[RMDB]
RNA sequence: GGGAACGACUCGAGUAGAGUCGAAAACUAAGAAUCGAGACGCAAAUGCAUAUCCCACUGGGAGUUCAUACGUCUUGCACUUGACCAACCCCAUAAAGAACAUUGCUCAGGUCGACCUCGUCUCAGCCAAGGUGCCCAACACAGUCUACAACCUGAAAUACACUGCUGUAUUCGUACAGCAGUGUAUAAAAGAAACAACAACAACAAC
Reactivity to 2A3 in 0.01 (KOAc 150mM, MgCl2 10mM, bicine 150mM(pH8.5), 24C), signal-to-noise 3, nucleotides 027 to 156: c050u060a070a020g050a070a130u110c020g010a030g020a010c020g000c080a100a140a020u030g010c040a030u100a220u120c040c030c060a200c240u170g010g010g000a040g000u090u130c010a040u030a100c010g000u000c000u000u030g030c040a030c030u050u020g020a030c000c040a030a070c030c010c000c000a040u120a120a080a020g080a060a020c050a130u060u180g010c010u030c070a040g050g030u030c030g040a070c010c010u030c020g040u000c020u000c040a010g010c020c010a010a040g050g030u070g030c010c010c010a040a010c040a000c020a040g060u040c050u180a050c030a030a020c000c000u050g020a040a050
Reactivity to DMS in 0.01 (KOAc 150mM, MgCl2 10mM, bicine 150mM(pH8.5), 24C), signal-to-noise 2, nucleotides 027 to 156: c040u000a070a240g010a070a160u010c000g010a040g010a060c000g000c030a040a100a090u000g010c130a090u000a160u010c000c010c010a210c160u030g040g030g000a080g000u000u000c040a230u000a050c000g030u000c050u000u000g000c090a150c000u000u010g010a160c030c020a070a070c030c010c010c020a100u000a040a090a130g030a050a080c010a120u000u000g050c000u000c030a050g020g030u000c010g010a140c040c030u020c050g010u000c030u000c070a080g010c010c040a040a070g020g030u000g020c010c010c040a080a050c060a060c010a060g010u000c020u010a070c080a040a130c000c000u010g020a050a090

Chemical mapping of a 207-nucleotide RNA with 2A3 and DMS. In probing experiments dimethyl sulfate is read out at A N1 and C N3, which are open when not base-paired. Values are in units of 0.01, from 0 to 300, in steps of 10. Reactivities are given for positions 27 through 156. The 2A3 profile rests on 2,885 reads.